RNA sequence: GGGAACGACUCGAGUAGAGUCGAAAAGAUAUGGACUGCACUUUCCAACAGCUCGCAAUCGGAAACGAUUGCCGAGACAUGGAAGUGCAGUCCUAAGUCAAAUCAUGAUACCUUCGGGUAUCAUGAACUAUCGGAACUGGUUCGCCAGUUCCGAUAGAAAAGAAACAACAACAACAAC
Reactivity to 2A3 in 0.01 (KOAc 150mM, MgCl2 10mM, bicine 150mM(pH8.5), 24C), signal-to-noise 2, nucleotides 027 to 126: g000a020u000a010u070g000g000a010c000u010g020c000a020c030u100u250u200c080c030a300a070c080a300g010c000u000c000g000c000a010a000u020c000g010g030a000a000a000c030g000a000u010u020g070c050c080g000a000g000a010c050a300u300g000g000a000a000g000u000g010c000a020g000u000c000c000u000a000a000g000u020c010a010a020a070u070c000a010u010g010a000u000a000c000c000u030u060c280g140g000g000u000a000u000c000a000u000g010a010a040
Reactivity to DMS in 0.01 (KOAc 150mM, MgCl2 10mM, bicine 150mM(pH8.5), 24C), signal-to-noise 2, nucleotides 027 to 126: g000a020u000a020u000g000g000a010c000u000g010c000a000c010u020u020u000c010c030a150a110c210a140g000c020u000c000g000c020a020a000u010c000g040g000a000a000a000c000g010a020u000u000g000c180c080g020a010g000a010c020a300u000g030g010a010a000g010u000g000c000a000g000u000c000c010u000a000a020g000u000c010a140a150a190u010c000a010u000g000a010u000a000c000c000u000u030c300g050g020g010u000a000u000c000a010u000g000a040a260